[RMDB]
RNA sequence: GGGAACGACUCGAGUAGAGUCGAAAAGCAGUACGUACCAUGGCUAGGUCCAUGAGUAGUGUGGUACAUGACUAUCAUGCGAUCGUACCUGAUCGGUACGCGCGCGAUCGCGAUCCUAGGCGAUCAGUCUGAAGUGACGGUUCGCCGUCACUUCAGAAAAAGAAACAACAACAACAAC
Reactivity to 2A3 in 0.01 (KOAc 150mM, MgCl2 10mM, bicine 150mM(pH8.5), 24C), signal-to-noise 3, nucleotides 027 to 126: g040c040a020g060u090a020c040g030u010a000c000c010a040u040g090g000c060u130a120g060g120u020c000c030a080u130g060a060g080u070a020g020u050g070u140g070g020u050a040c030a190u190g100a080c000u060a050u110c090a090u240g050c050g020a050u090c000g030u030a020c000c010u110g090a240u180c050g000g000u010a000c010g010c030g000c000g030c050g010a000u000c010g000c000g000a010u050c000c020u030a060g060g000c000g000a000u000c020a000g110
Reactivity to DMS in 0.01 (KOAc 150mM, MgCl2 10mM, bicine 150mM(pH8.5), 24C), signal-to-noise 2, nucleotides 027 to 126: g010c060a070g010u020a030c070g010u000a000c010c010a020u000g020g020c030u020a150g030g000u000c000c040a000u000g010a080g010u000a010g010u010g050u000g000g010u010a030c120a130u000g010a070c020u020a060u020c080a070u010g010c060g010a030u000c020g010u000a070c000c010u000g030a070u010c230g000g020u000a000c000g010c080g000c010g010c080g010a010u000c020g000c000g000a060u000c020c010u000a100g000g020c010g020a010u000c010a100g010
Overview
This 177-nucleotide RNA was probed chemically with 2A3 and DMS. It was measured as part of the RMDB library OK2TRN. The 2A3 profile rests on 2,528 reads. The DMS profile rests on 2,308 reads. The RNA was probed in 150 mM KOAc, 10 mM MgCl2 and 150 mM bicine (pH 8.5) at 24 C.